Conditions: 150 mM KOAc, 10 mM MgCl2 and 150 mM bicine (pH 8.5), 24 C. Chemical mapping of a 177-nucleotide RNA with 2A3 and DMS. For 2A3 the reverse transcriptase was SuperScript II with manganese. For 2A3, 881 sequencing reads were counted.
RNA sequence: GGGAACGACUCGAGUAGAGUCGAAAAUUCCGCGCCGACAACGAGGAGGCGAUGGCCAUCCGCAACCGGUGCGCCAAUCAGGCGCUGCACGACUCGUGCGAUUGGCUGCUGAGCGGCCAGGGAAGCAACGUUGCUGUACCUUCGGGUACAGCAACGUAAAAGAAACAACAACAACAAC
Reactivity to 2A3 in 0.01 (KOAc 150mM, MgCl2 10mM, bicine 150mM(pH8.5), 24C), signal-to-noise 1, nucleotides 027 to 126: u080u000c010c000g000c020g040c000c000g100a090c030a140a050c130g160a100g100g010a030g010g000c010g000a050u020g020g020c000c000a050u010c020c010g000c020a060a030c010c060g000g100u050g050c000g020c040c060a030a150u190c050a130g030g000c000g020c050u070g010c030a020c090g300a300c070u090c210g040u020g020c010g060a140u090u190g000g000c020u000g010c000u020g030a040g040c140g000g020c010c010a030g090g020g010a080a000g060c060a010
Reactivity to DMS in 0.01 (KOAc 150mM, MgCl2 10mM, bicine 150mM(pH8.5), 24C), signal-to-noise 1, nucleotides 027 to 126: u010u000c000c000g020c020g050c020c010g040a180c050a090a120c150g010a090g010g030a290g000g000c020g030a110u010g020g000c010c000a090u000c000c080g000c000a000a010c030c030g000g000u000g000c010g030c000c030a140a120u030c260a190g000g020c020g030c000u010g020c010a000c000g020a060c160u010c020g010u010g030c000g000a060u000u000g010g020c020u010g010c000u000g000a070g000c040g000g010c020c000a070g000g000g020a040a070g010c130a160